[RMDB]
RNA sequence: GGGAACGACUCGAGUAGAGUCGAAAAGCAGCGUUGUGGCCAGGAGGUGGGCUCAGAGGGCGGCGCAGAGCCUUGCUUGGGGAGAGGCUCUCGGACAGUCGGGGUUGCUGCGGGCCCGAGCCGGGUACCUCCCUGUUCAUUUCGAUGAACAGGGAGGAAAAGAAACAACAACAACAAC
Reactivity to DMS in 0.01 (KOAc 150mM, MgCl2 10mM, bicine 150mM(pH8.5), 24C), signal-to-noise 1, nucleotides 027 to 126: g000c020a120g020c010g000u020u000g050u000g000g020c050c050a090g000g000a060g020g000u030g010g000g010c020u000c050a080g040a210g010g000g010c010g020g020c020g000c070a070g000a070g000c000c000u000u010g000c050u000u000g000g010g000g000a150g010a140g010g020c010u040c000u000c070g000g010a290c110a070g000u050c000g000g000g000g000u000u000g000c030u030g000c000g000g000g000c000c000c030g000a090g000c020c010g020g000g020u000a110
Reactivity to 2A3 in 0.01 (KOAc 150mM, MgCl2 10mM, bicine 150mM(pH8.5), 24C), signal-to-noise 2, nucleotides 027 to 126: g000c040a000g030c020g050u050u080g010u110g080g000c020c040a050g000g020a050g000g040u110g030g040g000c030u060c020a100g110a100g070g070g010c070g040g000c000g000c010a000g000a010g020c000c010u000u040g010c010u040u100g030g000g030g000a100g000a030g050g050c030u040c020u000c030g030g050a070c070a050g050u070c000g000g000g000g010u030u150g070c000u020g020c020g010g030g010c000c000c000g010a010g000c000c020g020g000g000u040a030
This 177-nucleotide RNA was probed chemically with DMS and 2A3.
The 2A3 profile rests on 1,460 reads.
2A3 adducts were read by reverse transcription with SuperScript II with manganese.
Conditions: 150 mM KOAc, 10 mM MgCl2 and 150 mM bicine (pH 8.5), 24 C.
2A3 is a SHAPE reagent: it acylates the 2'-hydroxyl of flexible nucleotides of all four kinds.
The data come from the RNA Mapping Database (RMDB), library RFM100.